[RMDB]
RNA sequence: GGGAACGACUCGAGUAGAGUCGAAAAGAAUUAAGAUCCAGGAAGCCGAAAGGCGCGAAGCGACCGCUUGUACGUGUCGACCUAGACGAAAAGUCUAGGGGAGAUUCUGCACAUCUCCGACACGGUAGGGAGCUUCGCCCUGGUUAAGGUGCAGAUAAUAAUUAGCAUGGUUCGCCAUGCUAAUUAUAAAAGAAACAACAACAACAAC
Reactivity to 2A3 in 0.01 (KOAc 150mM, MgCl2 10mM, bicine 150mM(pH8.5), 24C), signal-to-noise 3, nucleotides 027 to 156: g030a000a010u200u190a170a020g040a100u040c000c000a000g000g000a160a050g000c020c030g080a160a040a050g010g000c010g000c000g000a000a000g000c000g020a040c000c030g090c260u200u230g050u140a040c010g000u000g010u010c010g010a020c010c000u000a010g010a010c010g060a110a170a160a040g000u000c000u000a000g000g020g010g020a000g000a000u130u090c010u010g000c000a000c000a010u010c000u000c010c030g010a000c000a010c000g060g020u130a120g020g000g010a010g000c000u010u000c000g000c000c000c010u000g000g000u010u010a020a040g040g000u010g000c000a000g020a000u080a120
Reactivity to DMS in 0.01 (KOAc 150mM, MgCl2 10mM, bicine 150mM(pH8.5), 24C), signal-to-noise 2, nucleotides 027 to 156: g000a160a110u000u000a140a200g010a120u000c010c020a050g010g010a150a160g030c000c000g000a130a120a190g020g000c030g040c010g000a020a050g000c020g000a300c020c010g040c130u020u000g050u000a050c000g030u030g010u000c000g030a240c000c030u000a020g010a020c000g010a110a120a160a190g000u000c010u000a000g000g000g020g000a050g000a040u000u010c010u000g040c070a040c130a150u000c000u010c010c010g010a010c000a010c000g010g000u000a120g000g000g020a300g020c010u000u000c020g020c000c000c000u010g010g010u000u000a040a080g000g010u000g020c020a050g020a130u000a110